[RMDB]
RNA sequence: GGGAACGACUCGAGUAGAGUCGAAAAUAGUGACCUUUGAAUAACUCUGUGUUUUCAUUAAAUCGUAGUGUUCAUUUACUUUGUCACUAAUUUCGCAUAACAUAUAUUAUGUUAAAUAAAAUAAAUGACAACUCAUUCUAUUCGUAGAAUGAGUUGUAAAAGAAACAACAACAACAAC
Reactivity to 2A3 in 0.01 (KOAc 150mM, MgCl2 10mM, bicine 150mM(pH8.5), 24C), signal-to-noise 5, nucleotides 027 to 126: u060a000g000u000g000a020c010c000u020u010u070g020a020a020u030a060a010c000u010c020u030g020u020g050u080u010u120u080c100a110u150u300a040a080a030u090c020g010u020a010g010u020g000u050u000c020a020u020u010u050a070c050u090u060u150g010u000c000a000c010u000a000a090u010u020u030c060g000c030a010u040a080a000c010a000u130a030u100a090u300u120a030u100g000u020u030a050a060a040u110a060a090a040a000u240a040a160a050u160g010
Reactivity to DMS in 0.01 (KOAc 150mM, MgCl2 10mM, bicine 150mM(pH8.5), 24C), signal-to-noise 2, nucleotides 027 to 126: u000a020g000u000g010a010c010c220u010u000u010g030a010a020u020a000a020c000u010c020u000g030u000g010u010u000u000u020c300a140u050u040a000a000a020u060c000g000u010a010g020u000g010u000u000c080a000u000u000u000a040c180u000u000u000g000u000c000a000c000u010a040a070u000u030u000c030g010c080a220u000a000a000c000a020u000a140u110a220u080u030a000u000g000u000u030a000a100a190u080a120a040a040a150u060a140a070a060u020g010

An RNA of 177 nucleotides, treated with 2A3 and DMS and read out base by base. The RNA was probed in 150 mM KOAc, 10 mM MgCl2 and 150 mM bicine (pH 8.5) at 24 C. For DMS the reverse transcriptase was MarathonRT. It was measured as part of the RMDB library RFM100. The DMS profile rests on 1,703 reads.